[RMDB]
Structure probing data (DMS and 2A3) for a 207-nucleotide construct. Reactivities are given for positions 27 through 156. 2A3 adducts were read by reverse transcription with SuperScript II with manganese. For 2A3, 2,318 sequencing reads were counted. For DMS, 2,430 sequencing reads were counted.

RNA sequence: GGGAACGACUCGAGUAGAGUCGAAAAGCAGUUCCAGAGUGUGAGGACUCUGAACUCGAAGGUAGAUGACCUCCUCACAGGUCAAAGUGAUAUUGAUAGGCAAGUAUCAGGAUCACACUACCCACAUACUUGUCUAUGUGAACUCGAGGAACUGAGAUACGAUAAUCCGUUUCGACGGAUUAUCGUAAAAAGAAACAACAACAACAAC
Reactivity to DMS in 0.01 (KOAc 150mM, MgCl2 10mM, bicine 150mM(pH8.5), 24C), signal-to-noise 2, nucleotides 027 to 156: g040c010a020g000u000u000c020c010a040g000a030g010u010g030u000g020a080g050g020a140c060u020c030u000g010a120a130c040u000c040g000a090a160g030g000u000a110g000a300u000g000a080c030c010u000c000c040u020c060a110c200a150g030g000u000c070a040a090a110g000u000g020a110u000a000u000u000g010a080u000a070g050g000c140a100a110g020u010a020u010c020a090g010g030a100u000c060a060c130a300c040u010a070c010c010c010a070c040a020u000a020c030u000u020g030u000c020u000a010u000g020u000g010a040a050c080u010c020g000a130g010g000a030a120c030u020g000a120g010a230
Reactivity to 2A3 in 0.01 (KOAc 150mM, MgCl2 10mM, bicine 150mM(pH8.5), 24C), signal-to-noise 3, nucleotides 027 to 156: g030c020a000g000u010u000c000c000a020g000a000g010u040g000u010g010a020g000g010a010c020u000c030u050g080a120a090c060u040c080g050a100a040g050g000u050a020g010a120u040g010a010c000c000u000c010c000u000c020a010c000a020g000g000u040c020a020a020a080g040u040g060a030u040a020u110u050g040a020u010a030g080g120c150a120a010g060u000a000u020c040a030g000g040a020u070c020a000c010a020c060u110a040c000c010c000a030c010a020u030a000c000u110u130g020u060c010u010a000u000g010u010g020a020a040c020u000c020g040a080g020g010a020a000c010u020g010a000g020a090
The reactions ran in a buffer of 150 mM KOAc, 10 mM MgCl2 and 150 mM bicine (pH 8.5), at 24 C.